[RMDB]
RNA sequence: GGGAACGACUCGAGUAGAGUCGAAAACGCGUCGAAAUUGACGUCGAUGGCCGCAUCACCCGGGCGAAAGUCGUCGAUCCGUCCUGGUUCAACUGGCCCGCACUGCCGGUGGCGAUGGCCGACACCACUAGUGCCCCAAUUUCGAUUGGGGCACUAGAAAAGAAACAACAACAACAAC
Reactivity to DMS in 0.01 (KOAc 150mM, MgCl2 10mM, bicine 150mM(pH8.5), 24C), signal-to-noise 2, nucleotides 027 to 126: c170g000c000g000u010c000g010a050a090a100u030u060g010a020c020g010u030c040g020a070u020g000g010c010c000g010c050a110u010c040a050c080c010c020g000g000g010c020g030a030a080a080g010u000c000g010u000c050g010a010u000c020c020g030u020c130c100u030g030g010u000u030c030a030a050c030u020g040g040c020c070c000g000c040a100c020u020g000c070c060g040g000u000g000g020c070g000a050u020g000g010c000c000g020a120c090a140c060c040a300
Reactivity to 2A3 in 0.01 (KOAc 150mM, MgCl2 10mM, bicine 150mM(pH8.5), 24C), signal-to-noise 5, nucleotides 027 to 126: c030g020c020g000u040c040g030a130a230a300u170u200g000a020c030g000u080c020g070a120u080g020g010c010c000g030c040a040u070c030a040c010c010c000g010g000g010c010g040a140a080a020g050u070c050g010u050c030g010a030u070c020c040g140u130c020c060u100g010g000u060u030c010a050a060c050u050g020g010c010c000c000g010c010a160c070u090g030c050c030g060g010u020g020g000c060g040a070u060g000g000c010c000g010a030c020a030c060c000a000